[RMDB]
RNA sequence: GGGAACGACUCGAGUAGAGUCGAAAAGAAUCGUUAAAUUUGACGAAAGGGUACGUAAAAGAACUUCCUUUUUGAUGAUUUAUCUAUAUAUUAGACGUAAUUGAUUGUUUCUGAUUUAAGUAUCGUGCUAUGUGCCGUUGUUCGCAACGGCACAUAGAAAAGAAACAACAACAACAAC
Reactivity to 2A3 in 0.01 (KOAc 150mM, MgCl2 10mM, bicine 150mM(pH8.5), 24C), signal-to-noise 1, nucleotides 027 to 126: g030a000a040u020c090g000u000u000a000a000a000u040u030u000g120a070c050g020a080a020a000g010g010g010u180a170c040g000u170a010a000a000a300g190a120a000c080u080u100c000c020u000u000u000u000u000g110a150u000g000a000u000u000u000a060u000c000u000a010u000a030u000a000u160u120a120g100a000c030g000u030a030a120u040u040g290a180u000u020g030u000u000u030c000u000g000a000u000u080u100a130a200g030u020a150u300c170g010u120g060
Background
The record gives the reactivity of an RNA of 177 nucleotides to 2A3. The RNA was probed in 150 mM KOAc, 10 mM MgCl2 and 150 mM bicine (pH 8.5) at 24 C.